The record gives the reactivity of an RNA of 177 nucleotides to 2A3 and DMS.
Values cover nucleotides 27 to 126.
It was measured as part of the RMDB libraries RFM100 and RFMREP.

[RMDB]
RNA sequence: GGGAACGACUCGAGUAGAGUCGAAAAGCAGCUCAAAGUGGGUGGUAAAUUCCAUCUAGGGCUAAAUAUAAGUGAGAGACCGAUAGCAAACAAGUACCGUGAGGGAAAGAUGAAAAGAACUUUGAAAAGUUUGUAUCAUGUUCGCAUGAUACAAACUAAAAGAAACAACAACAACAAC
Reactivity to 2A3 in 0.01 (KOAc 150mM, MgCl2 10mM, bicine 150mM(pH8.5), 24C), signal-to-noise 3, nucleotides 027 to 126: g010c030a000g000c000u010c000a150a130a000g140u110g050g000g020u000g000g010u050a300a050a020u180u170c000c000a010u020c010u020a030g000g040g000c000u070a000a090a000u220a010u040a040a020g110u030g090a090g000a010g000a050c040c070g090a160u090a030g030c080a000a010a210c020a050a010g030u020a070c020c040g020u050g010a060g000g000g000a010a050a030g030a030u120g010a030a020a010a010g040a030a070c060u090u110u120g130a140a080a000
Reactivity to DMS in 0.01 (KOAc 150mM, MgCl2 10mM, bicine 150mM(pH8.5), 24C), signal-to-noise 3, nucleotides 027 to 126: g020c160a060g000c010u000c010a090a090a160g040u000g000g010g020u000g000g010u020a060a160a130u050u020c000c000a010u000c000u010a170g010g000g000c000u000a060a080a090u040a100u020a090a050g020u020g010a110g000a060g030a160c040c050g000a040u030a090g000c070a050a100a080c060a020a070g040u020a050c000c020g040u040g000a130g000g000g000a030a060a120g000a060u000g000a080a060a100a110g010a070a050c040u000u000u000g000a070a090a080

Source information
2A3 adducts were read by reverse transcription with SuperScript II with manganese.